Structure probing data (DMS and 2A3) for a 177-nucleotide construct. Reactivities are given for positions 27 through 126. 2A3 adducts were read by reverse transcription with SuperScript II with manganese. The data come from the RNA Mapping Database (RMDB), library M2PK90. DMS adducts were read by reverse transcription with MarathonRT. The DMS profile rests on 2,526 reads.
RNA sequence: GGGAACGACUCGAGUAGAGUCGAAAAAAAACGAGCGUAAUCGCGUCUUGACUAGACUGUUACUGACGUGAGUAGGGAUCUAUCCCAGUGUGCAUAGCGCACAAUACGCUGAUUAACAGUCACGGAAACGCCAAUAUUACUUCGGUAAUAUUGGCGUAAAAGAAACAACAACAACAAC
Reactivity to DMS in 0.01 (KOAc 150mM, MgCl2 10mM, bicine 150mM(pH8.5), 24C), signal-to-noise 3, nucleotides 027 to 126: a030a040a040a120c140g000a040g000c010g030u000a030a080u000c040g010c010g000u010c000u020u010g010a140c150u020a090g010a020c040u010g030u000u020a070c110u000g010a080c040g040u000g010a040g010u010a080g010g000g000a050u010c220u010a090u000c000c000c010a210g040u000g020u000g010c020a140u010a120g030c170g010c010a000c000a050a170u000a040c010g030c010u020g000a040u010u010a040a020c040a030g020u000c000a130c210g000g010a070a090
Reactivity to 2A3 in 0.01 (KOAc 150mM, MgCl2 10mM, bicine 150mM(pH8.5), 24C), signal-to-noise 3, nucleotides 027 to 126: a000a000a000a000c120g010a020g000c030g020u080a040a110u060c030g000c010g040u000c010u080u050g070a050c040u020a070g010a030c020u020g010u010u040a050c020u010g030a030c010g010u000g020a010g060u160a130g020g020g000a010u050c080u190a180u040c040c010c000a010g000u010g000u000g050c020a100u110a240g030c040g000c020a010c000a010a020u070a010c040g010c010u030g010a060u060u030a000a000c000a030g020u030c020a000c040g090g050a110a150